[RMDB]
RNA sequence: GGGAACGACUCGAGUAGAGUCGAAAACGGGAACGAGGCAAUGCUUAAGAACUAAGUUGAGCAUUAAGGUCGCGAAUAGGCGACCUUAAAUAGAUGAUUAGUUCUUCAUCUAUGCCUCGUUCUCAAGGGUACUGUUACAUUUCGAUGUGGCAGUACCAAAAGAAACAACAACAACAAC
Reactivity to DMS in 0.01 (KOAc 150mM, MgCl2 10mM, bicine 150mM(pH8.5), 24C), signal-to-noise 6, nucleotides 027 to 126: c150g000g000g010a000a000c000g000a010g000g000c000a050a240u000g000c130u000u000a010a000g010a020a030c030u000a020a040g010u020u020g010a130g010c100a090u000u000a010a000g000g000u010c000g040c000g010a100a150u070a170g010g010c010g000a010c000c000u000u000a000a020a050u020a090g010a060u010g000a040u010u000a030g000u000u000c030u000u000c110a010u000c010u000a260u010g000c010c000u000c000g000u000u000c000u000c010a040a060g010
Reactivity to 2A3 in 0.01 (KOAc 150mM, MgCl2 10mM, bicine 150mM(pH8.5), 24C), signal-to-noise 9, nucleotides 027 to 126: c050g000g000g000a000a000c000g000a000g010g000c010a010a050u040g000c020u050u040a030a010g000a010a000c020u040a050a050g150u130u150g130a040g060c030a020u010u000a000a000g000g000u000c000g000c020g090a170a210u220a210g180g000c000g000a000c000c000u000u000a000a000a000u070a010g060a040u130g010a020u020u010a000g010u010u000c000u000u000c010a000u000c000u030a040u020g000c000c000u000c000g000u000u000c000u000c000a000a000g010

An RNA of 177 nucleotides, treated with DMS and 2A3 and read out base by base. For 2A3, 118,866 sequencing reads were counted. For DMS the reverse transcriptase was MarathonRT. The DMS profile rests on 27,016 reads. 2A3 adducts were read by reverse transcription with SuperScript II with manganese. Reactivities are rounded to 0.1 and cut off at 0 and 3.